[RMDB]
RNA sequence: GGGAACGACUCGAGUAGAGUCGAAAAAAAAGAUAUGGAGCCAAGCAAGCUUCUAGAGUCGUUGAAAGAGUUCGGAAACGAACUCUGGAGACUCGAUGAAGUGAUGACCUUGGCUCCUAAGUCAAAAUCAGGGUGUAAAGUUCGCUUUACACCCUGAAAAAGAAACAACAACAACAAC
Reactivity to DMS in 0.01 (KOAc 150mM, MgCl2 10mM, bicine 150mM(pH8.5), 24C), signal-to-noise 1, nucleotides 027 to 126: a130a090a000a020g000a070u000a300u020g000g000a040g000c000c000a000a000g000c010a050a240g020c000u000u000c000u000a300g010a040g010u000c000g070u010u060g000a180a140a020g010a020g000u000u000c000g010g000a090a060a180c000g000a000a000c020u020c000u000g000g000a080g010a020c000u000c000g010a110u000g020a000a000g040u000g010a010u010g010a080c300c000u040u000g010g010c010u000c000c020u000a020a060g000u000c050a100a040a160a200
Structure probing data (DMS) for a 177-nucleotide construct. The RNA was probed in 150 mM KOAc, 10 mM MgCl2 and 150 mM bicine (pH 8.5) at 24 C. Reactivities are given for positions 27 through 126.